[RMDB]
RNA sequence: GGGAACGACUCGAGUAGAGUCGAAAAGCAUCCUAUCACGAGGUAACUGGGUCUAGAUCAGUUACCUGUGAGCGAAAGUUCACAAUGUGUCAAUGAUCUAGACGUUGACGUAUUACUGAUAGGAUGGCUACAGCAUUCUAUUCGUAGAAUGCUGUAGAAAAGAAACAACAACAACAAC
Reactivity to DMS in 0.01 (KOAc 150mM, MgCl2 10mM, bicine 150mM(pH8.5), 24C), signal-to-noise 8, nucleotides 027 to 126: g010c010a010u000c000c000u000a000u000c000a030c100g020a150g010g010u000a020a040c020u000g010g010g010u000c080u010a070g010a040u000c000a020g010u000u000a010c000c010u000g010u000g000a010g010c010g000a120a100a150g010u000u000c000a010c010a030a040u000g010u010g000u000c090a030a050u000g000a060u000c090u000a050g010a050c020g010u000u000g010a080c120g000u000a030u000u000a160c230u000g010a010u000a000g000g000a010u000g010g010
Reactivity to 2A3 in 0.01 (KOAc 150mM, MgCl2 10mM, bicine 150mM(pH8.5), 24C), signal-to-noise 6, nucleotides 027 to 126: g040c000a000u000c000c000u000a000u010c010a010c090g080a060g040g030u020a030a010c010u020g020g010g070u030c050u060a040g010a110u020c000a010g030u010u000a000c000c000u000g000u000g000a000g000c000g030a110a000a010g000u000u000c000a000c000a020a060u060g060u030g000u030c020a010a020u030g020a070u020c030u080a030g040a090c030g150u010u020g020a020c020g020u030a020u020u040a020c010u000g000a000u000a000g000g000a000u000g010g000
This 177-nucleotide RNA was probed chemically with DMS and 2A3. The DMS profile rests on 20,398 reads. For DMS the reverse transcriptase was MarathonRT. The reactions ran in a buffer of 150 mM KOAc, 10 mM MgCl2 and 150 mM bicine (pH 8.5), at 24 C. For 2A3 the reverse transcriptase was SuperScript II with manganese.